[RMDB]
RNA sequence: GGGAACGACUCGAGUAGAGUCGAAAACUAAUGCCAUGAUAUUAUUCCUGUUAGGUUGCCAGUGAUUGAAAUAUGCGUUUAUUUCAUUGUAACACGCGCGUUUUAUUGAAUUUACUGUUUUCAAUGAAAUGUGGGUAUCAUUCGUGAUACCCACAUUAAAAGAAACAACAACAACAAC
Reactivity to DMS in 0.01 (KOAc 150mM, MgCl2 10mM, bicine 150mM(pH8.5), 24C), signal-to-noise 2, nucleotides 027 to 126: c080u000a070a100u000g020c050c070a060u020g010a120u000a060u000u010a160u000u000c040c020u000g010u000u000a080g020g000u000u000g010c080c010a050g010u000g000a050u000u000g000a020a040a040u000a060u000g010c090g020u000u010u000a040u000u000u000c080a060u000u020g010u010a030a040c170a030c070g020c030g000c080g000u000u000u010u000a070u010u010g010a040a050u010u000u000a090c110u000g000u010u000u000u000c020a010a070u010g000a080